The record gives the reactivity of an RNA of 177 nucleotides to DMS and 2A3. The 2A3 profile rests on 1,862 reads. For 2A3 the reverse transcriptase was SuperScript II with manganese. The reactions ran in a buffer of 150 mM KOAc, 10 mM MgCl2 and 150 mM bicine (pH 8.5), at 24 C.

RNA sequence: GGGAACGACUCGAGUAGAGUCGAAAACAUUGAGCCGACGUGGCACUGGAAACCGUGCUCUUUCACUGCAUUCGAGCCGUUAUAGUUAAUCGCUACUGGCAGGAAAUGGUACUGAAUAUUCGGCCACUCCACGUCUUAGUUUCGACUAAGACGUGGAAAAAGAAACAACAACAACAAC
Reactivity to DMS in 0.01 (KOAc 150mM, MgCl2 10mM, bicine 150mM(pH8.5), 24C), signal-to-noise 3, nucleotides 027 to 126: c090a180u000u020g020a110g030c030c060g000a050c290g040u010g000g000c070a050c050u000g000g000a080a090a090c110c160g020u000g000c010u000c090u010u000u000c030a070c010u000g030c040a100u010u010c080g020a160g030c000c040g030u000u000a130u010a090g010u010u010a060a100u000c300g020c010u000a050c210u000g020g000c020a060g010g000a040a020a040u000g000g030u010a030c080u010g000a040a060u000a200u000u000c030g010g010c020c020a040c160
Reactivity to 2A3 in 0.01 (KOAc 150mM, MgCl2 10mM, bicine 150mM(pH8.5), 24C), signal-to-noise 2, nucleotides 027 to 126: c060a090u070u090g060a020g100c070c030g030a090c080g070u000g000g020c040a040c090u090g040g030a120a000a020c050c020g020u020g040c010u050c000u030u040u030c170a200c170u090g000c010a040u110u110c050g030a000g020c000c000g020u040u050a090u060a070g120u070u080a050a080u080c010g000c020u060a080c010u130g070g040c000a000g010g040a020a040a040u060g020g010u040a010c010u020g000a110a040u110a170u160u010c000g000g010c000c000a020c050
It was measured as part of the RMDB library OK2TRN.